[RMDB]
RNA sequence: GGGAACGACUCGAGUAGAGUCGAAAACAGUGAGACUUCGGUCUCACUGAAAUGACUAUGCACCAUGACGAGGACGAAGAUGCGGAGGACGACGAGGAUCAAAAACAGCAAGGUUCGCCUUGCUGAACGACCAUUGAUGGUUCGCCAUCAAUGGUCGAAAAGAAACAACAACAACAAC
Reactivity to 2A3 in 0.01 (KOAc 150mM, MgCl2 10mM, bicine 150mM(pH8.5), 24C), signal-to-noise 2, nucleotides 027 to 126: c000a010g010u000g000a000g020a010c030u050u100c200g170g020u000c000u010c000a000c000u010g000a000a010a000u100g000a000c020u010a060u130g000c030a020c060c040a110u110g030a040c060g000a010g030g030a020c030g030a050a030g060a050u090g040c060g020g020a040g020g010a010c040g010a010c040g010a030g020g010a030u060c080a000a100a020a050a080c000a010g040c000a000a020g050g040u050u050c150g100c020c020u000u000g000c000u010g000a010a010
Reactivity to DMS in 0.01 (KOAc 150mM, MgCl2 10mM, bicine 150mM(pH8.5), 24C), signal-to-noise 1, nucleotides 027 to 126: c000a020g000u010g000a020g000a000c000u000u020c190g060g010u000c000u010c000a000c000u000g000a000a020a060u000g000a090c030u010a030u000g000c060a120c030c050a030u000g000a050c060g020a020g010g010a060c080g010a080a040g020a050u000g040c070g000g000a070g000g020a020c060g040a070c050g000a080g010g000a090u010c150a000a050a070a090a120c000a000g050c000a000a040g000g000u010u000c170g020c010c000u010u010g020c000u000g000a020a060